This 207-nucleotide RNA was probed chemically with 2A3. It was measured as part of the RMDB library OK3TST. The reactions ran in a buffer of 150 mM KOAc, 10 mM MgCl2 and 150 mM bicine (pH 8.5), at 24 C.
RNA sequence: GGGAACGACUCGAGUAGAGUCGAAAAGAAAUAUACUUGUUAGCAUGCUAUUAACAGAACAAUGCAAACAUAGCAUUCUCUUUCCAUAAAUGUCUGCCAGUACUAUUUGGCAUUCUGUUGAAUGCACAGAUUCUCUGCAAUCAACGUUUGGAAGGUACGAAUAUGUGCCGUUCGCGGCACAUAUUCGAAAAGAAACAACAACAACAAC
Reactivity to 2A3 in 0.01 (KOAc 150mM, MgCl2 10mM, bicine 150mM(pH8.5), 24C), signal-to-noise 2, nucleotides 027 to 156: g010a000a090a020u140a010u110a100c130u120u100g020u110u120a010g050c000a010u050g000c000u080a010u030u140a180a130c060a040g080a070a030c130a150a260u190g160c000a080a120a000c060a050u040a000g000c000a040u090u000c060u040c000u090u000u060c010c000a020u080a180a090a000u190g030u020c030u030g040c000c000a000g020u080a190c130u100a240u060u070u020g000g000c000a000u020u010c040u080g060u050u050g010a040a050u010g050c010a010c000a070g170a260u300u000c060u060c020u130g010c010a000a050u000c000a000a030c070g000u000u000u000g000g000a000a000g070g060u090a020